[RMDB]
RNA sequence: GGGAACGACUCGAGUAGAGUCGAAAAAGGACACAAAGUGCUCGUCACUUUGUAACAGUUUCCAGUCGUCGUUUGGCAGAAACCGUUUUGAUGAUGUGACCGAGCGACUAAUCUUCUCUCUGAGCUCCUUCGAUAUAAUUUUCGAAUUAUAUCGAAGAAAAGAAACAACAACAACAAC
Reactivity to 2A3 in 0.01 (KOAc 150mM, MgCl2 10mM, bicine 150mM(pH8.5), 24C), signal-to-noise 9, nucleotides 027 to 126: a000g070g010a040c040a000c010a070a030a000g010u010g020c030u130c190g230u270c030a000c000u010u010u010g010u010a020a010c020a030g010u010u040u000c030c030a040g110u090c030g010u010c010g010u030u060u070g030g000c020a020g100a090a060a060c040c030g040u040u090u170u150g140a160u060g010a030u080g060u050g070a130c020c040g010a010g010c010g020a010c000u010a040a050u020c020u060u010c030u000c010u000c040u070g050a020g040c020u040c010
Reactivity to DMS in 0.01 (KOAc 150mM, MgCl2 10mM, bicine 150mM(pH8.5), 24C), signal-to-noise 9, nucleotides 027 to 126: a060g010g010a120c210a050c020a020a020a020g010u000g000c010u030c220g010u030c000a010c000u000u000u000g010u000a060a140c110a080g010u000u000u000c000c020a140g010u010c140g010u000c050g010u000u000u000g010g010c050a110g000a080a090a060c110c040g020u000u010u020u020g010a080u010g000a110u010g010u010g000a090c030c030g010a030g000c010g010a030c030u000a070a080u010c050u010u010c030u000c030u010c050u000g000a090g010c110u000c080
Structure probing data (2A3 and DMS) for a 177-nucleotide construct. The RNA was probed in 150 mM KOAc, 10 mM MgCl2 and 150 mM bicine (pH 8.5) at 24 C. Values cover nucleotides 27 to 126. The data come from the RNA Mapping Database (RMDB), libraries RFM100 and RFMREP.